[RMDB]
RNA sequence: GGGAACGACUCGAGUAGAGUCGAAAAGCAGUUUCACUCACGAUAGACUCUUGAGGAAGAGUGUCAGUAUUGCUUCCUCAAGCAAUACAUUUCGGUAUGCCAAUACUGAAAUUGACAGCAGAUUGGCAUCUGCUCUAUCUCAUGAAACUGGUGAGUCUGAUAAUGCGUGAUUCGUCACGCAUUAUCAAAAAGAAACAACAACAACAAC
Reactivity to 2A3 in 0.01 (KOAc 150mM, MgCl2 10mM, bicine 150mM(pH8.5), 24C), signal-to-noise 7, nucleotides 027 to 156: g100c030a000g000u000u000u010c040a040c040u070c010a050c090g030a050u030a040g020a050c010u020c020u050u080g150a100g100g140a060a010g000a010g010u040g040u050c030a020g020u030a020u020u050g020c000u050u020c020c070u150c060a000a000g000c000a000a010u020a030c020a060u030u040u060c010g020g010u060a010u020g160c040c030a060a000u040a110c030u000g020a030a050a060u090u150g040a030c010a020g000c000a000g030a050u080u140g120g030c050a030u000c000u010g000c000u000c000u010a030u010c000u000c010a020u040g020a020a030a020c010u000g010g040u060g040a030g060u010c070
Reactivity to DMS in 0.01 (KOAc 150mM, MgCl2 10mM, bicine 150mM(pH8.5), 24C), signal-to-noise 3, nucleotides 027 to 156: g050c040a050g000u000u000u010c020a010c030u010c060a070c130g030a050u010a040g010a080c030u000c010u000u010g010a230g000g010a060a050g010a040g010u000g000u000c060a200g030u000a050u000u000g010c000u000u010c090c100u000c120a030a020g010c020a000a020u000a030c030a300u000u010u000c040g030g020u000a020u000g010c160c260a090a100u000a030c010u000g000a020a030a080u010u000g010a080c050a040g000c000a030g010a100u000u000g040g000c150a290u000c010u000g010c000u000c000u000a000u010c010u000c100a050u000g000a010a010a040c020u000g040g010u000g000a100g010u000c100

Source: RMDB library OK3TST, as collected in RNAgym. This 207-nucleotide RNA was probed chemically with 2A3 and DMS. For DMS the reverse transcriptase was MarathonRT.